[RMDB]
RNA sequence: GGGAACGACUCGAGUAGAGUCGAAAAUCCCCAUAGUUCGCUAUGGGGAAAAGCCGUACGGCGUAGCACGCGGAUAGGAGCGAAGAUAUCCACGGCACGCGAAAACCUUCGCCUUCGGGCGAAGGAAGAUAUCAGCAAACUUCGGUUUGCUGAUAUCAAAAGAAACAACAACAACAAC
Reactivity to 2A3 in 0.01 (KOAc 150mM, MgCl2 10mM, bicine 150mM(pH8.5), 24C), signal-to-noise 4, nucleotides 027 to 126: u000c000c000c000c000a000u010a010g010u020u030c190g020c100u000a000u010g000g000g000g000a000a040a010a040g060c010c010g070u130a090c130g180g000c010g010u010a050g000c030a080c300g000c010g000g010a010u030a030g130g110a150g130c120g060a090a010g060a150u050a010u020c010c010a000c000g010g000c010a000c000g000c000g040a040a030a050a080c000c000u010u000c010g010c010c000u040u110c240g080g000g000c010g000a000a000g000g010a000a010
Reactivity to DMS in 0.01 (KOAc 150mM, MgCl2 10mM, bicine 150mM(pH8.5), 24C), signal-to-noise 3, nucleotides 027 to 126: u000c000c000c010c000a010u000a000g010u000u020c200g020c020u000a010u000g000g000g000g000a000a000a030a080g000c030c010g000u010a090c210g000g010c000g000u000a100g030c010a070c000g060c020g000g000a020u000a020g020g000a140g020c160g000a090a110g000a120u000a010u000c000c010a020c000g000g000c020a030c020g000c010g000a070a050a110a150c000c000u000u000c010g010c000c000u000u010c150g030g010g010c000g000a000a000g010g000a010a040
Overview:
Chemical mapping of a 177-nucleotide RNA with 2A3 and DMS. It was measured as part of the RMDB library M2PK50. Conditions: 150 mM KOAc, 10 mM MgCl2 and 150 mM bicine (pH 8.5), 24 C.